Source: RMDB library TTRDEL, as collected in RNAgym. Structure probing data (DMS and 2A3) for a 177-nucleotide construct. The DMS profile rests on 8,967 reads. For 2A3 the reverse transcriptase was SuperScript II with manganese. The RNA was probed in 150 mM KOAc, 10 mM MgCl2 and 150 mM bicine (pH 8.5) at 24 C. High 2A3 reactivity points to a flexible backbone, as in loops and unpaired stretches. For DMS the reverse transcriptase was MarathonRT.

RNA sequence: GGGAACGACUCGAGUAGAGUCGAAAAGAUAUGGAGUCCACGAGUCUCGCUCGGAAACGAGCGGGAGGACGAUGAGUGGCUCCUAAGUCAAAACCGGUUACAGUGGGUUCGCCCACUGUAACCGGAACCUAAAGGUAUUGUUCGCAAUACCUUUAGGAAAAGAAACAACAACAACAAC
Reactivity to DMS in 0.01 (KOAc 150mM, MgCl2 10mM, bicine 150mM(pH8.5), 24C), signal-to-noise 6, nucleotides 027 to 126: g000a040u010a300u000g000g010a010g000u010c010c000a060c020g010a300g010u000c000u000c000g010c000u000c000g010g010a100a070a180c010g010a010g000c010g000g000g010a030g000g010a130c190g010a110u010g000a230g010u000g000g000c000u000c000c000u000a030a090g020u010c030a090a050a150a120c000c010g000g000u000u000a000c010a010g000u000g000g000g000u000u010c240g020c000c000c000a010c000u000g000u000a000a000c000c000g000g000a010a010
Reactivity to 2A3 in 0.01 (KOAc 150mM, MgCl2 10mM, bicine 150mM(pH8.5), 24C), signal-to-noise 5, nucleotides 027 to 126: g020a010u070a050u180g010g000a010g030u120c040c000a010c050g020a050g110u000c010u010c040g000c000u000c010g020g040a070a100a070c010g000a000g000c000g010g030g000a020g040g070a040c160g060a100u250g140a060g030u070g000g000c000u000c000c000u020a170a020g050u030c020a020a010a110a190c000c000g000g000u000u000a000c000a000g000u000g000g090g030u050u110c260g140c020c000c000a010c000u000g000u000a010a000c000c000g000g000a000a000